Background
Chemical mapping of a 177-nucleotide RNA with 2A3 and DMS. The 2A3 profile rests on 2,573 reads. Values cover nucleotides 27 to 126. The RNA was probed in 150 mM KOAc, 10 mM MgCl2 and 150 mM bicine (pH 8.5) at 24 C. Source: RMDB library OK2TST, as collected in RNAgym.
RNA sequence: GGGAACGACUCGAGUAGAGUCGAAAAGCAACCAUAAGGGAGAACACUUUUGUAAAUGGCACAUUUCCACUAACUCCUAUUUCAAUUGCUGUUAGUGCUGCUCCUAUCACUACUGAUAGCCAGGCUGCCCGAAAUAUAACUUCGGUUAUAUUUCGGGAAAAGAAACAACAACAACAAC
Reactivity to 2A3 in 0.01 (KOAc 150mM, MgCl2 10mM, bicine 150mM(pH8.5), 24C), signal-to-noise 3, nucleotides 027 to 126: g000c000a010a060c000c010a060u060a130a110g060g030g000a040g030a070a030c040a070c090u110u100u110u130g110u130a050a070a060u050g080g000c050a020c010a080u080u080u040c030c000a040c030u070a060a020c010u000c020c010u060a150u030u110u100c090a080a090u050u040g010c030u020g080u100u050a040g030u020g060c010u020g000c020u050c020c000u040a030u050c020a010c120u210a030c030u130g000a010u030a020g040c080c030a020g000g030c030u040g040
Reactivity to DMS in 0.01 (KOAc 150mM, MgCl2 10mM, bicine 150mM(pH8.5), 24C), signal-to-noise 4, nucleotides 027 to 126: g010c050a050a100c040c070a120u010a080a140g010g000g020a070g010a090a100c140a080c090u010u010u020u010g010u010a060a080a090u020g000g010c090a050c100a090u010u000u000c060c020a040c070u000a040a080c030u000c040c000u000a050u000u000u010c170a100a090u010u000g010c020u000g010u000u000a020g010u000g000c030u000g010c040u000c060c010u000a030u000c020a040c240u000a130c210u000g000a030u000a040g020c080c040a020g000g000c060u000g010